Structure probing data (DMS and 2A3) for a 177-nucleotide construct. For 2A3, 11,031 sequencing reads were counted. Reactivities are given for positions 27 through 126. The data come from the RNA Mapping Database (RMDB), library OK1LIB. Conditions: 150 mM KOAc, 10 mM MgCl2 and 150 mM bicine (pH 8.5), 24 C. For 2A3 the reverse transcriptase was SuperScript II with manganese.

RNA sequence: GGGAACGACUCGAGUAGAGUCGAAAAGGGGGCCUCUGAUGGACAGAGCACAAUGAACGAGUUGCCCAGCAGGGUAGGGAGCUCAGGAGUGGCUGAGAGGCUGGCCACCUGCCCUCUGCAGCCUCCCACUUCCUGACAUUUUCGAAUGUCAGGAAGUAAAAGAAACAACAACAACAAC
Reactivity to DMS in 0.01 (KOAc 150mM, MgCl2 10mM, bicine 150mM(pH8.5), 24C), signal-to-noise 6, nucleotides 027 to 126: g010g000g000g000g010c020c010u000c010u010g000a210u030g010g010a150c040a050g000a050g000c130a120c170a070a080u010g010a130a140c110g010a150g000u020u020g000c010c000c000a140g010c130a090g010g000g010u020a050g010g000g010a180g020c050u000c020a060g000g010a110g010u010g000g000c010u000g010a090g000a040g000g010c010u010g000g020c030c040a050c010c040u010g010c020c010c010u000c030u010g010c020a030g000c010c010u000c000c040c040
Reactivity to 2A3 in 0.01 (KOAc 150mM, MgCl2 10mM, bicine 150mM(pH8.5), 24C), signal-to-noise 9, nucleotides 027 to 126: g020g000g000g000g010c020c010u010c020u040g090a120u140g070g080a050c020a020g020a020g050c060a020c060a110a180u210g040a070a030c050g010a020g050u070u110g250c010c010c010a010g090c060a030g030g080g010u110a050g040g020g010a030g000c010u010c030a020g030g080a100g050u070g020g010c010u020g030a040g000a000g100g000c020u020g000g010c010c020a040c010c010u020g000c020c000c000u020c010u050g030c010a010g000c000c000u000c000c000c000